[RMDB]
This 207-nucleotide RNA was probed chemically with DMS and 2A3. It was measured as part of the RMDB library OK3TST. Conditions: 150 mM KOAc, 10 mM MgCl2 and 150 mM bicine (pH 8.5), 24 C. DMS adducts were read by reverse transcription with MarathonRT. Reactivities are given for positions 27 through 156. For DMS, 2,754 sequencing reads were counted.
RNA sequence: GGGAACGACUCGAGUAGAGUCGAAAACGAUCUGUUCGCAGAUCGAGCUACGGAGACGUAGCAAAGCGAGCGAGGAGCUGGACGCUCGCCCUACCGGAAAUGUAAGCAUAUCCACGUGUGCUAGGAUAUGCCCAGCUCCAGAGAGACAGCACACGAAUACACAGUCAUUAUUCGUAAUGACUGUGUAAAAAGAAACAACAACAACAAC
Reactivity to DMS in 0.01 (KOAc 150mM, MgCl2 10mM, bicine 150mM(pH8.5), 24C), signal-to-noise 2, nucleotides 027 to 156: c040g000a010u000c000u010g030u020u000c300g010c010a030g020a030u000c030g020a080g010c010u000a000c000g010g020a240g020a280c020g040u000a010g000c010a050a120a060g000c060g000a030g030c000g010a120g030g000a060g020c060u000g000g020a190c030g050c020u000c020g000c010c000c070u000a290c070c050g000g020a080a090a090u010g030u000a200a150g010c010a030u000a020u020c000c010a080c050g010u000g040u000g000c010u040a150g000g000a050u010a050u000g000c000c000c050a040g000c040u020c010c030a100g000a090g000a120g000a030c030a020g010c000a020c020a010c000g000a110a150
Reactivity to 2A3 in 0.01 (KOAc 150mM, MgCl2 10mM, bicine 150mM(pH8.5), 24C), signal-to-noise 2, nucleotides 027 to 156: c000g000a000u000c000u000g040u050u060c130g000c070a010g000a000u000c000g000a020g000c000u000a010c010g000g020a040g030a050c010g000u000a000g000c010a060a000a000g010c000g000a000g010c020g000a030g020g000a010g010c000u000g000g050a040c010g000c000u000c000g000c020c000c010u020a020c010c000g040g060a030a020a030u100g050u150a070a090g000c000a000u000a000u000c000c000a050c080g010u010g000u000g000c010u030a030g000g000a000u000a000u010g000c000c000c000a000g000c000u000c000c000a010g040a000g000a000g000a010c030a050g010c010a000c000a000c000g010a000a010